Chemical mapping of a 177-nucleotide RNA with 2A3. Conditions: 150 mM KOAc, 10 mM MgCl2 and 150 mM bicine (pH 8.5), 24 C. Reactivities are given for positions 27 through 126. The data come from the RNA Mapping Database (RMDB), library OK1LIB.

RNA sequence: GGGAACGACUCGAGUAGAGUCGAAAAUUCAGGUCUGCGAGCAAUGCGACCUGCCCGUCCCACCGGAUCUCCAAGUGACGGCGUGACACACCGGUGUCGGGCAGCCGGAACUGGGCGUCCUGUCCGCGCCCUACCCCGUUUUCGAACGGGGUAGGGCAAAAGAAACAACAACAACAAC
Reactivity to 2A3 in 0.01 (KOAc 150mM, MgCl2 10mM, bicine 150mM(pH8.5), 24C), signal-to-noise 2, nucleotides 027 to 126: u170u040c000a010g020g000u010c050u300g020c000g210a080g060c090a220a090u290g000c010g010a000c000c000u000g000c000c000c000g050u000c030c010c000a060c040c040g000g030a050u020c080u040c040c020a260a300g030u020g000a000c020g000g000c000g040u050g000a000c000a000c000a060c070c210g300g010u000g010u010c000g000g090g090c060a070g030c000c000g020g020a050a040c010u040g000g030g000c030g000u000c000c050u000g010u150c140c050g090c050